[RMDB]
RNA sequence: GGGAACGACUCGAGUAGAGUCGAAAAAUAGGUUAUAGUUCAUGUGUAACAUCUGUGUUUUAAAAUAACUCUAGUUAUCCGGGGCGUUUUUCACAAAGUUUGUGUAAGAUGCUUUCCUGGGUCGAUGCUGAUGCGGAAGAUUCGUCUUCCGCAUCAGAAAAGAAACAACAACAACAAC
Reactivity to 2A3 in 0.01 (KOAc 150mM, MgCl2 10mM, bicine 150mM(pH8.5), 24C), signal-to-noise 1, nucleotides 027 to 126: a000u070a000g000g150u080u050a090u030a110g130u110u000c000a120u140g070u030g060u120a040a090c000a070u000c000u120g130u020g040u000u000u070u120a120a160a150a020u040a000a000c000u000c120u120a040g010u060u110a080u000c000c020g000g000g000g040c000g000u000u000u000u010u060c000a000c000a010a140a050g100u070u220u070g040u040g020u020a000a020g000a000u000g000c000u140u180u030c000c060u020g000g000g000u020c010g070a080u180g030